[RMDB]
Conditions: 150 mM KOAc, 10 mM MgCl2 and 150 mM bicine (pH 8.5), 24 C. Chemical mapping of a 177-nucleotide RNA with 2A3 and DMS. 2A3 adducts were read by reverse transcription with SuperScript II with manganese. Values cover nucleotides 27 to 126. For DMS, 1,507 sequencing reads were counted.

RNA sequence: GGGAACGACUCGAGUAGAGUCGAAAAACUACCUCGGGGAUAACUGGGUGGUCGCAGGCAAGAGCCCAUAUCGACCCUGCGGCUUGCUACUUCGAUGUCGGUUCUUUCCAUCCUGGGUGUGCAGCAGACCACUCCGAUCAUUCGUGAUCGGAGUGGUAAAAGAAACAACAACAACAAC
Reactivity to 2A3 in 0.01 (KOAc 150mM, MgCl2 10mM, bicine 150mM(pH8.5), 24C), signal-to-noise 1, nucleotides 027 to 126: a010c010u020a040c000c030u120c080g000g000g010g060a110u060a220a110c030u030g000g020g090u050g020g000u000c000g000c010a000g000g000c030a050a010g000a010g070c020c040c070a070u110a030u160c080g010a070c000c000c010u010g000c010g030g000c010u010u130g020c000u020a020c000u080u140c040g030a060u230g040u060c040g020g110u000u020c040u000u110u000c050c010a040u020c000c020u060g000g040g000u060g020u020g000c020a020g040c000a000g000
Reactivity to DMS in 0.01 (KOAc 150mM, MgCl2 10mM, bicine 150mM(pH8.5), 24C), signal-to-noise 1, nucleotides 027 to 126: a020c040u000a090c020c000u050c070g000g000g000g020a300u060a050a090c210u000g000g000g030u000g000g010u010c080g000c000a020g000g000c000a130a280g000a030g010c040c120c040a100u080a020u000c000g010a300c300c000c000u040g000c000g000g000c030u000u000g020c000u000a190c030u000u030c040g020a070u020g000u000c080g090g000u000u010c090u000u020u000c050c010a050u040c050c020u000g000g020g000u000g000u000g010c020a000g030c110a040g050